[RMDB]
RNA sequence: GGGAACGACUCGAGUAGAGUCGAAAAGACUAAUGCAAUUGAAUCUUCAGGGUUUGCAUAAGCGCCAGGACUGCUGCAGAUAUUGCAGAGAUUGCAUUCAUAAAGCAUCUUACCACUUUCCAUAUUGUCACGCAGACAAAUUCGUUUGUCUGCGUGAAAAAGAAACAACAACAACAAC
Reactivity to DMS in 0.01 (KOAc 150mM, MgCl2 10mM, bicine 150mM(pH8.5), 24C), signal-to-noise 2, nucleotides 027 to 126: g010a240c080u000a060a090u000g000c010a030a030u010u000g020a080a130u000c050u020u000c040a050g020g010g010u000u000u020g040c060a080u020a100a060g010c010g020c050c110a080g000g000a070c080u000g010c000u010g020c010a020g000a110u010a070u010u000g000c010a040g000a130g000a060u000u000g010c000a040u000u000c170a100u040a050a160a090g000c060a040u000c040u000u000a140c060c070a050c160u000u010u000c000c040a090u000a100u000u010g010
Reactivity to 2A3 in 0.01 (KOAc 150mM, MgCl2 10mM, bicine 150mM(pH8.5), 24C), signal-to-noise 2, nucleotides 027 to 126: g000a000c020u070a060a020u020g000c020a010a050u090u090g090a130a080u040c010u070u060c060a060g080g020g000u080u100u140g020c010a020u070a280a070g000c020g010c070c040a020g030g060a020c060u070g010c020u000g000c070a010g040a200u130a140u140u170g000c020a000g010a040g010a030u020u070g000c030a000u000u040c030a040u170a130a110a000g000c020a030u020c000u020u000a070c040c000a060c070u040u070u000c040c000a020u040a040u190u150g070